Source: RMDB library TTRDES, as collected in RNAgym. Chemical mapping of a 177-nucleotide RNA with 2A3 and DMS. For 2A3 the reverse transcriptase was SuperScript II with manganese. DMS adducts were read by reverse transcription with MarathonRT. The RNA was probed in 150 mM KOAc, 10 mM MgCl2 and 150 mM bicine (pH 8.5) at 24 C.
[RMDB]
RNA sequence: GGGAACGACUCGAGUAGAGUCGAAAAGAUAUGGACGCCCAGACCCGAGCUUCUCGGAAACGAGAAGAACUACUCGCUGGAAGCGUCCUAAGUCAAAUGACUAAUGCGCGUUCGCGCGCAUUAGUCAGUUAGCAUAGUGCUUCGGCACUAUGCUAACAAAAGAAACAACAACAACAAC
Reactivity to 2A3 in 0.01 (KOAc 150mM, MgCl2 10mM, bicine 150mM(pH8.5), 24C), signal-to-noise 2, nucleotides 027 to 126: g010a020u010a000u040g010g040a000c010g030c020c000c020a030g060a290c280c300c230g000a000g000c000u000u000c010u010c020g000g000a000a010a010c010g000a000g000a030a000g010a000a000c010u270a050c010u030c110g030c030u010g010g050a300a200g040c000g000u000c000c010u000a000a000g010u010c020a050a120a300u210g000a000c000u010a000a000u010g000c000g000c000g030u060u100c220g050c030g000c000g000c160a010u000u000a000g000u010c000a000
Reactivity to DMS in 0.01 (KOAc 150mM, MgCl2 10mM, bicine 150mM(pH8.5), 24C), signal-to-noise 2, nucleotides 027 to 126: g020a010u000a060u000g000g010a010c000g020c030c020c000a060g000a300c300c230c060g000a030g000c020u000u010c000u000c000g030g020a040a010a020c000g020a020g000a010a010g000a020a010c050u000a300c000u000c020g000c010u010g000g000a170a220g010c010g020u000c010c010u000a000a130g000u000c020a070a100a200u000g000a000c000u010a000a010u000g000c000g010c000g040u000u000c230g020c000g030c000g000c000a000u010u010a000g000u000c000a010